[RMDB]
RNA sequence: GGGAACGACUCGAGUAGAGUCGAAAACAUUUUCAUGGCAUCAUUAUUCAAUGAGCUUAAAGGUGAUAUUAGUUUACUGGACCCUGGUUGUGGCCCCGGCUCACUUACCGCAGCGUUUACAGAAGAACCCUCUCUCUAAAUUCGUUUAGAGAGAGGGAAAAGAAACAACAACAACAAC
Reactivity to 2A3 in 0.01 (KOAc 150mM, MgCl2 10mM, bicine 150mM(pH8.5), 24C), signal-to-noise 1, nucleotides 027 to 126: c010a040u050u010u180u170c050a070u090g060g000c030a160u020c000a000u070u140a060u210u130c010a000a070u000g000a000g010c000u030u070a150a000a040g100g000u060g050a040u040a090u200u170a050g070u080u060u090a090c050u030g010g030a060c020c000c000u000g120g000u020u060g010u050g020g000c010c010c010c010g060g010c040u000c030a010c030u040u030a040c010c010g030c040a010g010c010g010u020u090u030a040c040a030g080a130a020g010a080a070
Reactivity to DMS in 0.01 (KOAc 150mM, MgCl2 10mM, bicine 150mM(pH8.5), 24C), signal-to-noise 3, nucleotides 027 to 126: c050a090u010u010u010u000c050a070u010g010g000c010a130u000c000a010u000u010a140u010u010c210a030a040u000g030a060g020c020u000u010a070a130a090g010g010u000g000a060u010a070u010u000a190g000u000u000u000a060c070u010g010g010a090c060c020c010u000g020g010u000u010g020u010g010g010c050c050c050c060g000g020c030u000c030a020c070u000u000a060c080c060g020c070a080g010c070g020u000u000u000a080c070a100g000a090a120g010a120a140